An RNA of 177 nucleotides, treated with DMS and 2A3 and read out base by base. Reactivities are given for positions 27 through 126. The DMS profile rests on 7,942 reads. 2A3 adducts were read by reverse transcription with SuperScript II with manganese.

[RMDB]
RNA sequence: GGGAACGACUCGAGUAGAGUCGAAAAGAAUGAAUAGUGGUGUCACGGCUCUGGAGCCGCUCCCGAGCCGCGGCUAACGCUAUCUGAAGGGCGGCUCAAAAAUAGAAGCGAGAAGAAGACUCGCAGACAGUGAUAGUAGGUUCGCCUACUAUCACUGAAAAGAAACAACAACAACAAC
Reactivity to DMS in 0.01 (KOAc 150mM, MgCl2 10mM, bicine 150mM(pH8.5), 24C), signal-to-noise 4, nucleotides 027 to 126: g000a090a070u030g010a130a020u010a010g010u000g010g000u000g000u010c010a040c020g000g000c000u010c010u000g000g010a020g010c170c080g000c030u010c000c000c050g000a010g010c010c010g060c040g020g020c020u040a080a070c030g000c000u000a030u010c040u000g000a110a140g000g000g020c010g010g000c010u010c050a030a060a090a100a120u040a060g000a130a140g000c000g000a000g010a130a110g000a120a120g010a090c010u000c010g000c020a110g020a220
Reactivity to 2A3 in 0.01 (KOAc 150mM, MgCl2 10mM, bicine 150mM(pH8.5), 24C), signal-to-noise 7, nucleotides 027 to 126: g080a030a090u210g040a030a040u020a040g050u030g120g120u130g010u040c010a000c010g000g000c000u000c040u080g010g010a010g070c120c070g070c080u000c000c000c010g000a000g000c000c000g000c000g000g000c020u030a070a020c020g000c010u000a010u050c040u050g040a040a060g020g010g000c000g000g000c000u050c090a130a110a020a030a000u230a080g110a180a030g010c000g010a000g010a190a040g050a040a010g080a060c000u000c000g000c020a010g040a030